[RMDB]
RNA sequence: GGGAACGACUCGAGUAGAGUCGAAAAAUGAGCGCCGCAGAAGGAUAAGUGAUGCACCGCGUCGCACUUCUCCUGCCUUCUCCUCUGUGCUCAAGUGGACAGUAAAGUGAAAUAGAUGCAGGAUUCAAUUAUACCAGCGGUUCGCCGCUGGUAUAAUAAAAGAAACAACAACAACAAC
Reactivity to 2A3 in 0.01 (KOAc 150mM, MgCl2 10mM, bicine 150mM(pH8.5), 24C), signal-to-noise 4, nucleotides 027 to 126: a020u150g010a050g020c070g000c020c060g000c040a010g060a160a050g070g030a040u080a250a090g070u100g070a070u030g010c030a040c130c060g030c050g010u030c020g020c010a020c000u140u030c010u030c020c000u020g010c000c000u030u000c040u030c030c000u010c010u040g050u090g050c000u020c040a120a100g100u090g060g050a020c020a030g030u170a030a250a020g090u130g180a060a080a040u150a060g030a020u080g000c010a030g020g030a010u100u020c030a070
Reactivity to DMS in 0.01 (KOAc 150mM, MgCl2 10mM, bicine 150mM(pH8.5), 24C), signal-to-noise 3, nucleotides 027 to 126: a080u040g010a120g000c020g010c050c120g000c170a070g010a130a070g010g010a070u030a040a080g000u020g020a040u040g000c060a080c070c070g000c050g020u030c050g000c020a040c050u010u000c050u020c020c010u000g020c030c080u000u000c030u000c030c000u030c010u000g000u010g000c020u010c080a140a120g030u030g010g000a050c000a070g000u040a020a080a090g000u040g000a100a050a060u010a080g010a040u000g010c050a030g010g000a150u020u020c100a080
About this RNA:
Structure probing data (2A3 and DMS) for a 177-nucleotide construct. For 2A3 the reverse transcriptase was SuperScript II with manganese. The DMS profile rests on 3,992 reads.